[RMDB]
RNA sequence: GGGAACGACUCGAGUAGAGUCGAAAAAGUGAGAGAAUCAAAAGAGGAUAUAGAGCAGGAAGGGUCCAUUUCUGACUUCGGGGACAAUGCUCUUGAAGAGGACGCUAGGAUGACUCCCACCAAGUUACGUCUAGUUACGCUUCGGCGUAACUAGACGAAAAGAAACAACAACAACAAC
Reactivity to 2A3 in 0.01 (KOAc 150mM, MgCl2 10mM, bicine 150mM(pH8.5), 24C), signal-to-noise 2, nucleotides 027 to 126: a000g070u160g000a000g000a070g000a010a110u030c000a010a080a110a030g110a030g200g000a000u030a020u000a170g000a030g090c000a070g090g000a040a000g020g040g000u000c080c010a000u050u060u070c000u020g160a180c000u170u130c140g050g000g000g000a040c030a080a170u130g040c030u000c000u020u010g130a100a010g060a010g000g130a000c010g060c080u000a060g050g000a170u060g030a090c010u000c030c000c000a000c010c010a050a000g060u130u130a000
Reactivity to DMS in 0.01 (KOAc 150mM, MgCl2 10mM, bicine 150mM(pH8.5), 24C), signal-to-noise 1, nucleotides 027 to 126: a060g010u010g000a060g000a100g020a270a010u030c090a010a110a000a030g000a010g020g060a050u000a030u000a100g000a090g000c000a070g020g000a050a100g000g000g000u040c020c150a070u040u000u040c090u000g000a120c000u000u000c050g130g000g000g000a040c000a040a240u050g000c000u000c050u090u000g000a160a060g000a060g010g020a020c100g000c040u000a020g060g000a090u000g000a200c030u000c000c000c000a170c090c130a100a100g000u000u000a080